[RMDB]
RNA sequence: GGGAACGACUCGAGUAGAGUCGAAAAACGCGUUGGCUACGGCCGACGCGAAGAUUUGCAUAUAGUGUAGUAUGCAACUAAAAAUAAAGAAAUACACGUCAAGAACAGUCCGGUACGCCGGACUGAAAAAAGGACUCUUUCUUCGGAAAGAGUCCAACCUUAAUAGAGUCUUCGGACUCUAUUAAGGAAAAGAAACAACAACAACAAC
Reactivity to 2A3 in 0.01 (KOAc 150mM, MgCl2 10mM, bicine 150mM(pH8.5), 24C), signal-to-noise 2, nucleotides 027 to 156: a000c010g020c000g000u010u000g000g000c020u030a060c230g140g000c000c000g000a000c000g020c000g000a010a010g020a030u010u040u020g010c000a000u000a000u000a110g010u010g000u000a010g000u000a000u000g010c010a000a000c030u190a090a000a050a050a120u170a020a090a030g100a020a120a000u020a010c010a000c010g140u130c100a110a060g020a180a150c010a000g000u000c010c010g010g030u060a030c210g040c030c000g000g040a010c000u020g010a000a000a000a000a000a000g000g000a000c000u000c000u010u000u000c020u030u060c110g040g000a000a000a000g000a000g000u000c000c000a000a000